RNA sequence: GGGAACGACUCGAGUAGAGUCGAAAAUGUAGGUGCGGCCUAGGAAGAAGAUCUCGCGGGCAAACUUCUGGCCGACCUGACGGGCCAGAUAUGCGCUGCCGUAACCGCCAUCGAAGCUGCCGACGUCGAGCGGAGAGAUAUUCGUAUCUCUCCGCUCAAAAGAAACAACAACAACAAC
Reactivity to DMS in 0.01 (KOAc 150mM, MgCl2 10mM, bicine 150mM(pH8.5), 24C), signal-to-noise 1, nucleotides 027 to 126: u030g010u000a040g000g020u000g020c050g010g020c030c060u020a110g010g000a060a070g000a110a150g000a100u010c080u000c090g010c070g000g000g000c080a070a090a160c150u010u010c000u020g000g000c010c000g010a100c110c070u000g000a050c070g000g020g000c010c020a020g000a000u030a150u000g030c090g020c060u000g020c020c010g010u010a090a070c060c020g000c030c130a090u010c060g010a060a060g020c020u010g010c020c010g010a100c080g000u000c130